[RMDB]
RNA sequence: GGGAACGACUCGAGUAGAGUCGAAAAGAUAUGGACCCCCUUUCAAUGAUGCCACCGCUGGUCGGAAACGACCAUGUGGUUGAGAAAGGCGUCCUAAGUCAAACCUUCUGAGUUCGCUCAGAAGGAACAGCUGAUAGAAGUUCGCUUCUAUCAGCUGAAAAGAAACAACAACAACAAC
Reactivity to DMS in 0.01 (KOAc 150mM, MgCl2 10mM, bicine 150mM(pH8.5), 24C), signal-to-noise 4, nucleotides 027 to 126: g010a030u000a230u010g010g020a010c000c030c180c010c020u000u000u000c000a170a170u010g010a140u000g020c010c010a010c000c040g010c110u000g000g010u000c000g000g010a090a020a090c000g000a000c010c000a010u030g000u000g020g010u000u000g000a260g000a010a010a010g000g070c300g000u000c000c000u010a000a150g010u000c010a130a140a070c000c000u000u010c000u000g000a020g010u000u020c300g010c000u000c000a000g020a010a010g000g010a040a090
Reactivity to 2A3 in 0.01 (KOAc 150mM, MgCl2 10mM, bicine 150mM(pH8.5), 24C), signal-to-noise 1, nucleotides 027 to 126: g020a060u100a050u150g000g000a010c000c020c000c000c090u000u000u030c110a250a290u180g100a030u150g070c000c010a000c010c000g060c080u010g000g020u000c000g020g000a000a070a040c000g010a000c000c010a000u100g010u000g000g000u000u000g000a000g000a000a010a020g000g000c000g000u000c010c000u030a130a020g060u090c080a070a070a300c010c000u000u030c000u010g000a000g030u100u160c280g170c070u000c000a000g000a010a000g000g000a010a010

The record gives the reactivity of an RNA of 177 nucleotides to DMS and 2A3. For DMS, 1,845 sequencing reads were counted. The RNA was probed in 150 mM KOAc, 10 mM MgCl2 and 150 mM bicine (pH 8.5) at 24 C. It was measured as part of the RMDB library TTRDEL.